[RMDB]
RNA sequence: GGGAACGACUCGAGUAGAGUCGAAAAAGAGCCGGACACGUCCGGCUCAACGGGGGAUACGUGUGGUGCCGUCCGCUCCCCCUAUGGCAUAACAAAUGCACCACACACUAGGCUACGGCCUAGUGAAAAAAUCCCUACAUGUUCGCAUGUAGGGAAAGAACAAAUUACUCUUCGGAGUAAUUUGUUCAAAAGAAACAACAACAACAAC
Reactivity to 2A3 in 0.01 (KOAc 150mM, MgCl2 10mM, bicine 150mM(pH8.5), 24C), signal-to-noise 2, nucleotides 027 to 156: a010g000a010g000c040c010g070g010a030c040a050c200g200u000c000c000g000g000c000u000c010a000a000c000g000g000g010g020g010a010u020a080c010g030u020g000u000g010g000u000g000c010c000g020u040c000c070g050c040u020c000c020c000c000c000u020a130u180g070g040c100a060u120a270a020c090a050a020a020u100g000c000a000c000c000a010c000a000c000a000c010u010a000g000g020c000u000a000c240g080g000c000c000u010a000g010u010g010a050a010a020a000a010a020u020c000c000c000u000a000c000a000u000g010u010u060c180g010c160a000u000g000u010a000g000g000g020a020a000a010